The record gives the reactivity of an RNA of 177 nucleotides to DMS and 2A3.
RNA sequence: GGGAACGACUCGAGUAGAGUCGAAAAUUUCCCUCAGGAUAGCAGUAACGUUUUCAGUUUUAUGAGGUAAAGCGAAUGAUUAGAGGCCUUGGGGUUGAAACAACCUUAACCUAUUCUCAAACUUUAAAGAAUACUGACUAUUCGUAGUCAGUAUUCUAAAAGAAACAACAACAACAAC
Reactivity to DMS in 0.01 (KOAc 150mM, MgCl2 10mM, bicine 150mM(pH8.5), 24C), signal-to-noise 4, nucleotides 027 to 126: u020u000u000c010c000c010u010c110a070g010g000a070u010a030g010c060a090g010u010a050a070c070g000u000u000u010u010c040a110g000u020u010u010u000a060u020g010a060g000g010u030a050a050a070g010c050g000a090a060u000g000a060u010u010a090g000a080g010g000c090c080u000u010g010g000g020g000u000u000g000a110a090a060c070a040a050c030c010u000u010a050a070c050c020u000a090u000u010c020u000c040a060a090a110c080u010u010u010a050a090
Reactivity to 2A3 in 0.01 (KOAc 150mM, MgCl2 10mM, bicine 150mM(pH8.5), 24C), signal-to-noise 6, nucleotides 027 to 126: u000u010u000c000c000c000u010c020a020g030g010a070u060a050g000c030a010g050u080a080a080c050g010u010u000u050u050c020a020g010u020u010u070u170a170u160g080a030g050g050u060a050a040a000g050c050g040a090a070u070g040a020u060u100a070g040a000g060g040c010c030u040u050g060g000g000g000u020u020g060a140a070a020c050a010a010c010c000u020u030a020a030c010c000u030a050u080u000c050u000c020a120a160a150c030u070u080u120a100a190
Record summary
2A3 adducts were read by reverse transcription with SuperScript II with manganese. The RNA was probed in 150 mM KOAc, 10 mM MgCl2 and 150 mM bicine (pH 8.5) at 24 C.